[RMDB]
RNA sequence: GGGAACGACUCGAGUAGAGUCGAAAAUGAAUUUGCUAAUUUCUACGUUGGAUGUCACUGUUGAUUUGUUUGUGCUUAUUGGUAUUCCUACAGAUUGCUUAUAAUUUGUUUGUGAUCAUAGAGAAACUACACUAAUUGUGUUCGCACAAUUAGUGUAAAAAGAAACAACAACAACAAC
Reactivity to DMS in 0.01 (KOAc 150mM, MgCl2 10mM, bicine 150mM(pH8.5), 24C), signal-to-noise 4, nucleotides 027 to 126: u000g010a090a060u000u010u010g020c060u010a070a090u000u000u000c030u000a090c120g020u010u000g000g010a060u010g010u010c060a080c090u010g000u000u000g000a140u000u000u010g010u000u000u010g020u000g000c030u000u010a100u010u000g010g030u000a100u000u000c010c010u010a020c100a070g000a020u000u000g010c090u010u010a040u000a090a140u010u010u010g010u000u000u010g010u000g010a040u000c040a190u010a100g020a150g010a080a050a050c140